RNA sequence: GGGAACGACUCGAGUAGAGUCGAAAAGACCUUCAGUUCGCUGAAGGUCGAUGAUGGUAAGAGAGAUUACCAUCUGUUAAGUGAUAAGGAUAAGAUCUCUCAGUGAACGUGCUUUCGAGCACGUUAAAAGAUUCCAGGUAUUCGUACCUGGAAUCUUAAAAGAAACAACAACAACAAC
Reactivity to 2A3 in 0.01 (KOAc 150mM, MgCl2 10mM, bicine 150mM(pH8.5), 24C), signal-to-noise 3, nucleotides 027 to 126: g000a000c000c000u000u010c010a050g000u030u130c200g020c090u000g000a000a000g000g000u010c000g020a000u010g000a000u010g000g010u010a140a010g000a010g010a000g010a020u020u010a010c000c000a010u000c010u010g160u090u210a120a120g090u080g200a130u100a250a100g120g010a090u070a170a060g020a070u000c010u010c000u020c040a030g060u030g240a020a000c000g000u010g000c000u100u050u100c200g030a000g000c000a000c010g000u000u000a000a020
Reactivity to DMS in 0.01 (KOAc 150mM, MgCl2 10mM, bicine 150mM(pH8.5), 24C), signal-to-noise 3, nucleotides 027 to 126: g000a000c010c000u000u010c000a000g010u010u010c240g020c000u000g000a010a020g000g020u010c000g020a030u010g000a010u000g000g010u010a040a160g000a010g000a030g010a030u000u000a020c000c000a010u000c010u000g010u010u020a070a100g000u000g010a130u010a090a110g010g000a160u010a030a100g020a050u000c000u010c000u000c020a250g020u010g010a050a010c000g020u000g000c000u000u000u020c150g000a020g010c000a000c000g000u000u000a020a060